[RMDB]
RNA sequence: GGGAACGACUCGAGUAGAGUCGAAAAGAAAAACUCAGCACUGCGGAGUGAUUGGAUGGGUCCUAUCUUUUGAGAGAUCAGCUGUUCGUUGCCUUCUCCCGAGCAAAGAAACAUGCAAGCGCUGCGGCAUUACUAUAAUCUUCGGAUUAUAGUAAUGAAAAGAAACAACAACAACAAC
Reactivity to 2A3 in 0.01 (KOAc 150mM, MgCl2 10mM, bicine 150mM(pH8.5), 24C), signal-to-noise 4, nucleotides 027 to 126: g040a020a100a000a020a000c020u010c020a010g050c010a010c080u120g000c020g030g040a050g030u060g030a090u070u130g070g020a020u030g040g030g030u010c010c010u040a050u040c020u050u100u140u120g110a090g010a010g010a050u040c020a010g020c020u040g060u120u050c050g040u070u030g010c000c000u050u030c030u020c010c000c010g010a030g010c010a040a110a050g040a040a110a020c020a010u090g010c030a040a050g060c040g000c050u060g010c000g030g000
Reactivity to DMS in 0.01 (KOAc 150mM, MgCl2 10mM, bicine 150mM(pH8.5), 24C), signal-to-noise 6, nucleotides 027 to 126: g010a070a080a080a110a100c030u000c020a060g010c050a070c100u010g010c070g010g020a090g020u000g000a110u000u000g010g010a070u000g010g010g010u000c020c030u000a070u000c010u000u000u000u000g010a100g010a090g000a060u000c090a080g020c020u000g000u000u000c070g010u000u000g010c030c020u010u000c100u000c010c010c020g010a100g010c070a020a090a070g010a070a060a060c100a050u010g010c050a100a100g020c080g020c050u000g010c050g010g020
Chemical mapping of a 177-nucleotide RNA with 2A3 and DMS. The RNA was probed in 150 mM KOAc, 10 mM MgCl2 and 150 mM bicine (pH 8.5) at 24 C. For DMS, 9,180 sequencing reads were counted.